[RMDB]
RNA sequence: GGGAACGACUCGAGUAGAGUCGAAAACGCAGCGCCAGAAGCGGCUGGGCCCGCAAAGGAACCAGAUGUAGCAGAUGCGCCAGCAGCAGCCCCAGUGGAUCCAUCGCCGCAGGCUGAUAGCGCUCCGCCAUCCGCUAGAUUUCGAUCUAGCGGAUGGAAAAGAAACAACAACAACAAC
Reactivity to DMS in 0.01 (KOAc 150mM, MgCl2 10mM, bicine 150mM(pH8.5), 24C), signal-to-noise 2, nucleotides 027 to 126: c080g020c150a040g020c040g000c000c030a030g000a210a110g050c010g000g020c040u000g020g010g020c080c000c000g000c120a030a120a190g030g000a140a050c060c050a150g000a090u010g010u000a080g010c030a080g000a110u000g000c040g000c060c060a040g030c000a080g010c040a100g030c050c000c030c020a250g000u010g000g000a070u010c030c020a100u000c110g000c000c010g000c060a070g010g030c020u010g000a120u010a070g050c020g010c010u010c130c040g000
Reactivity to 2A3 in 0.01 (KOAc 150mM, MgCl2 10mM, bicine 150mM(pH8.5), 24C), signal-to-noise 1, nucleotides 027 to 126: c010g010c050a000g000c000g020c030c010a020g000a080a000g030c010g000g000c010u000g000g000g000c030c010c030g050c050a130a090a000g010g010a040a050c010c030a070g020a200u140g020u110a030g010c050a030g050a240u160g080c030g000c030c000a020g000c020a040g030c010a030g000c010c000c020c020a020g000u030g030g000a040u010c010c010a050u110c120g000c000c000g020c030a040g290g000c010u010g020a070u140a070g020c010g000c020u060c040c010g100